[RMDB]
RNA sequence: GGGAACGACUCGAGUAGAGUCGAAAAAUUUUAGGGUCUACUACUGGAGGACUAGUCUUAAGACAGUGGGACAAAAGUUCUUGGGAUUUUCACCCCUUAAUCAAUAUGCUCAUGUUGACUACCUAUGUGUAAGGCAGUCAAGAGAAGCAGAGAAGAACAUCGCCUAGGUAUUCGUACCUAGGCGAUGAAAAGAAACAACAACAACAAC
Reactivity to 2A3 in 0.01 (KOAc 150mM, MgCl2 10mM, bicine 150mM(pH8.5), 24C), signal-to-noise 1, nucleotides 027 to 156: a000u200u160u050u090a050g160g040g000u070c070u000a070c030u060a030c000u100g140g000a020g000g000a000c000u050a070g020u000c000u060u180a130a000g130a130c050a040g070u070g060g050g010a000c000a020a250a000a030g020u000u030c000u020u020g050g020g000a060u140u060u000u050c080a060c000c000c000c000u050u170a040a070u050c010a030a110u120a070u100g000c000u010c020a010u080g080u190u030g000a000c000u010a010c000c000u060a120u060g110u030g080u170a040a040g000g010c000a000g000u000c010a000a000g080a000g000a080a030g040c000a010g010a000g000a130a000g020a020a000